[RMDB]
RNA sequence: GGGAACGACUCGAGUAGAGUCGAAAACAAGCGCGGCAGGUGCUCCGGAUGUUUGGAGCUGGGUCGCAAGCUGUAUGCGCACAUGCGAUGCGCGCCUCCUGUGCGGCCAGACUCUGGCAACCUGGCCUCUACUCAGCGGGUUCGCUCGUUGGGUAGAAAAAGAAACAACAACAACAAC
Reactivity to DMS in 0.01 (KOAc 150mM, MgCl2 10mM, bicine 150mM(pH8.5), 24C), signal-to-noise 9, nucleotides 027 to 126: c070a070a050g000c040g010c030g000g010c020a050g010g010u010g010c030u000c010c020g020g010a150u030g020u010u020u030g010g000a060g010c000u020g010g010g020u000c030g010c010a030a050g010c040u000g000u010a070u020g010c010g010c010a030c040a200u030g010c190g010a110u000g010c020g010c020g000c080c040u000c070c020u000g010u020g010c080g000g000c000c010a020g000a080c050u020c060u010g000g010c200a110a070c100c010u000g000g000c010c020
Reactivity to 2A3 in 0.01 (KOAc 150mM, MgCl2 10mM, bicine 150mM(pH8.5), 24C), signal-to-noise 9, nucleotides 027 to 126: c050a030a040g030c020g000c020g060g000c020a030g070g100u070g040c010u020c020c010g100g050a200u180g160u210u210u300g040g000a000g000c000u020g030g030g020u000c000g000c010a000a020g000c020u030g030u100a070u160g030c010g030c010a010c010a060u230g140c090g150a170u030g000c010g000c000g010c000c010u030c000c010u080g040u060g080c020g010g000c000c000a020g010a090c030u050c050u140g040g000c020a030a030c000c000u010g060g000c000c000
Record summary: Structure probing data (DMS and 2A3) for a 177-nucleotide construct.